RNA sequence: GGGAACGACUCGAGUAGAGUCGAAAACGGACGCCGCCCAGUGGUUCGAGGUUUACCCCAAAUCCAAAGAAUUCGCCGCCCAGCAGCGGCAAGCAUGAAAGGAGCUGUAUUCAUGACCACCCCGAAAACCACCCAACUGGCCAGCGGCAUGGCCGACCACUUUGCUAGUAUUCGUACUAGCAAAGUGAAAAGAAACAACAACAACAAC
Reactivity to 2A3 in 0.01 (KOAc 150mM, MgCl2 10mM, bicine 150mM(pH8.5), 24C), signal-to-noise 2, nucleotides 027 to 156: c020g000g050a020c030g050c010c000g000c020c020c010a030g020u030g020g030u080u140c060g100a110g030g050u060u070u140a120c040c000c010c010a030a020a020u070c060c010a050a100a090g080a030a100u120u090c070g000c040c000g080c020c040c110a090g060c110a000g040c050g010g010c000a000a020g030c010a020u110g050a080a080a050g050g030a030g020c050u050g050u160a180u010u080c030a020u050g060a070c030c000a030c030c030c010c010g020a060a060a010a050c050c010a020c050c010c000a100a140c070u020g030g020c020c020a010g020c000g050g000c000a040u060g030g000c000c000g000a030c020